RNA sequence: GGGAACGACUCGAGUAGAGUCGAAAAUAAGCUUUUCAUUACUCGUGAAGAGGCUGUAAGGCAAGUUCGAAGCUGGAUAGGCUUCGAUGUUGAGGGUGCUCAUGCUUCCCGUAAUGCAUGUGGCACCGAAUGAUUUUGUGUUCGCACAAAAUCAUUCAAAAGAAACAACAACAACAAC
Reactivity to 2A3 in 0.01 (KOAc 150mM, MgCl2 10mM, bicine 150mM(pH8.5), 24C), signal-to-noise 3, nucleotides 027 to 126: u040a010a020g000c010u050u010u000u000c010a020u050u220a180c040u030c070g060u080g270a200a020g000a030g050g020c030u050g050u070a030a010g030g030c040a060a030g060u020u020c000g010a010a000g020c010u040g080g150a230u170a200g030g000c000u000u000c000g000a000u020g090u040u150g080a130g090g000g000u000g000c000u000c000a000u000g000c000u040u040c030c010c000g020u140a090a110u200g010c000a000u000g070u120g020g000c010a000c000c010
Reactivity to DMS in 0.01 (KOAc 150mM, MgCl2 10mM, bicine 150mM(pH8.5), 24C), signal-to-noise 4, nucleotides 027 to 126: u010a120a110g020c010u010u000u000u010c000a030u000u000a210c110u000c100g020u000g010a110a120g000a020g010g000c200u000g020u010a060a080g010g010c030a120a100g020u000u000c010g010a000a010g020c000u000g010g030a160u010a140g000g000c000u000u000c000g010a010u000g000u000u000g000a110g010g010g020u000g000c010u000c000a000u000g000c010u000u000c010c010c020g000u020a090a050u010g000c000a010u000g010u010g000g000c010a010c000c010